[RMDB]
The data come from the RNA Mapping Database (RMDB), library 15KREP. The record gives the reactivity of an RNA of 177 nucleotides to DMS. The DMS profile rests on 756 reads. The reactions ran in a buffer of 150 mM KOAc, 10 mM MgCl2 and 150 mM bicine (pH 8.5), at 24 C. Values cover nucleotides 27 to 126.

RNA sequence: GGGAACGACUCGAGUAGAGUCGAAAAUGUCCAGUCCCUCCCCGCUCCUGGAGAAGGGAGACUCGGGAACGCCUAGCAUCUGAGGGACAAAGCCGCCCCCGGGCGCUCCCCUCGGAGAUCCACUGGGACCGUCCUAUAGAUUCGUCUAUAGGACGGUAAAAGAAACAACAACAACAAC
Reactivity to DMS in 0.01 (KOAc 150mM, MgCl2 10mM, bicine 150mM(pH8.5), 24C), signal-to-noise 1, nucleotides 027 to 126: u030g030u010c050c030a120g010u020c020c010c020u000c000c010c020c180g030c010u010c010c020u020g020g000a160g030a160a120g000g000g000a040g000a050c060u010c150g010g000g000a060a080c100g020c010c010u010a070g010c100a110u000c010u020g010a060g000g000g010a040c040a090a070a120g010c120c070g020c040c030c010c180c300g030g040g010c020g010c010u000c040c000c000c010u000c010g000g000a040g020a110u000c090c110a130c020u000g010g000g010